Description: Structure probing data (2A3 and DMS) for a 177-nucleotide construct. The data come from the RNA Mapping Database (RMDB), library OK2TRN. For 2A3 the reverse transcriptase was SuperScript II with manganese.
[RMDB]
RNA sequence: GGGAACGACUCGAGUAGAGUCGAAAAGGCCAGGAGCUGUCGUUGCACGGCGGAUUGAUCGAUUCGACCGCAUCCAUCUGGAGCUACUGCCCCAGACCGGACUCGCAGCCUUGGCAAGCCGCUACGCUGGACAGAACCUGUUCGCAGGUUCUGUCCAAAAAGAAACAACAACAACAAC
Reactivity to 2A3 in 0.01 (KOAc 150mM, MgCl2 10mM, bicine 150mM(pH8.5), 24C), signal-to-noise 2, nucleotides 027 to 126: g060g000c010c010a040g000g010a210g020c020u010g180u300c050g060u100u060g120c100a060c070g030g020c080g020g040a090u050u100g090a120u110c180g060a060u070u010c030g080a130c190c000g000c020a010u060c010c000a020u050c020u010g000g000a010g010c020u210a250c120u300g030c020c000c010c000a010g000a020c070c120g020g000a030c040u050c050g000c060a000g020c000c000u010u000g000g010c010a000a000g050c010c010g040c050u100a080c060g070c100
Reactivity to DMS in 0.01 (KOAc 150mM, MgCl2 10mM, bicine 150mM(pH8.5), 24C), signal-to-noise 2, nucleotides 027 to 126: g000g010c040c000a090g000g000a130g030c000u000g020u020c010g000u000u020g030c300a110c040g000g000c060g000g000a070u000u020g020a140u000c180g000a130u000u000c020g030a160c010c030g020c140a120u000c010c020a300u000c000u000g020g000a040g010c010u000a050c240u000g030c000c050c000c010a010g000a080c150c150g000g000a210c150u000c100g010c000a030g000c000c000u010u010g010g000c010a080a030g000c010c080g020c060u000a100c100g020c090